Structure probing data (DMS and 2A3) for a 207-nucleotide construct. DMS adducts were read by reverse transcription with MarathonRT. The 2A3 profile rests on 3,800 reads.
[RMDB]
RNA sequence: GGGAACGACUCGAGUAGAGUCGAAAAUGUGUAGGAAGAGAUCUUCGGUGACCAUGUAGCCUGAAGCUCUCAUUUUGUCAUCGAGGGACACCAAAACUCAGAACAGUGCUAAGCUCCUACAUCCUGUUCUGGAAGGACAAUCCUGAGCACACGAUGAUAUCACUACCAUGUUCGCAUGGUAGUGAUAAAAAGAAACAACAACAACAAC
Reactivity to DMS in 0.01 (KOAc 150mM, MgCl2 10mM, bicine 150mM(pH8.5), 24C), signal-to-noise 3, nucleotides 027 to 156: u000g010u000g010u010a110g030g020a100a180g020a060g010a060u000c000u020u000c030g070g070u010g010a080c070c190a100u000g020u000a140g030c010c000u000g020a090a190g010c100u000c040u020c050a110u010u000u010u000g020u000c010a020u010c020g000a190g020g020g000a090c060a100c000c040a070a050a050a160c120u010c010a040g020a020a020c020a040g040u000g020c030u010a120a180g010c140u010c060c000u000a050c020a000u000c030c010u000g000u000u000c020u000g010g020a140a110g030g000a070c080a180a130u000c000c000u000g010a140g020c040a140c040a060c030g000a100u010g000a140
Reactivity to 2A3 in 0.01 (KOAc 150mM, MgCl2 10mM, bicine 150mM(pH8.5), 24C), signal-to-noise 5, nucleotides 027 to 156: u070g010u010g000u020a010g030g020a060a070g040a020g020a080u020c010u000u010c000g030g020u040g010a060c030c050a080u140g050u100a020g020c010c100u150g070a080a020g010c010u020c000u010c010a030u060u120u080u100g030u000c010a010u010c020g010a070g010g000g010a020c010a060c040c030a040a100a070a080c050u040c020a000g010a010a020c010a010g020u020g080c060u170a130a020g050c050u050c050c010u020a030c020a020u040c010c000u000g000u000u010c000u010g050g030a070a080g070g010a030c070a050a060u010c000c010u020g040a030g010c020a010c010a000c070g050a040u070g010a010